[RMDB]
RNA sequence: GGGAACGACUCGAGUAGAGUCGAAAAGGCUCCGUGUCUCUUUAGCCUCACAAGUGGAUGGCUCUACGUCUCUCUAGCCUCGUGAGUGGAUGGCUCUGUGUCUCUCUAGCUUCUCUAGCCUCAGGAGGUCGCAUGGUUAAUUCGUUAACCAUGCGACAAAAGAAACAACAACAACAAC
Reactivity to DMS in 0.01 (KOAc 150mM, MgCl2 10mM, bicine 150mM(pH8.5), 24C), signal-to-noise 2, nucleotides 027 to 126: g020g000c020u000c050c050g030u020g000u000c010u010c030u000u000u010a080g000c030c020u000c060a090c100a140a140g000u000g040g000a080u000g020g010c010u000c040u000a050c060g020u000c020u020c040u010c050u010a120g000c040c020u010c040g050u000g000a120g010u010g010g010a130u010g000g020c030u000c060u000g010u000g020u000c000u010c040u000c010u010a130g010c040u010u010c060u000c050u010a110g010c030c020u010c050a100g000g000a140g020
Reactivity to 2A3 in 0.01 (KOAc 150mM, MgCl2 10mM, bicine 150mM(pH8.5), 24C), signal-to-noise 2, nucleotides 027 to 126: g040g000c030u020c030c030g050u050g070u010c020u000c000u030u100u170a060g010c000c000u020c000a110c010a090a170g060u080g110g020a100u080g050g010c000u000c030u100a060c060g040u000c010u000c010u000c020u080a070g010c000c010u050c040g080u040g020a110g000u070g110g040a130u070g070g010c020u020c030u080g080u000g010u040c020u020c000u000c010u070a030g000c020u080u000c030u000c030u110a070g040c000c020u060c040a050g010g120a080g010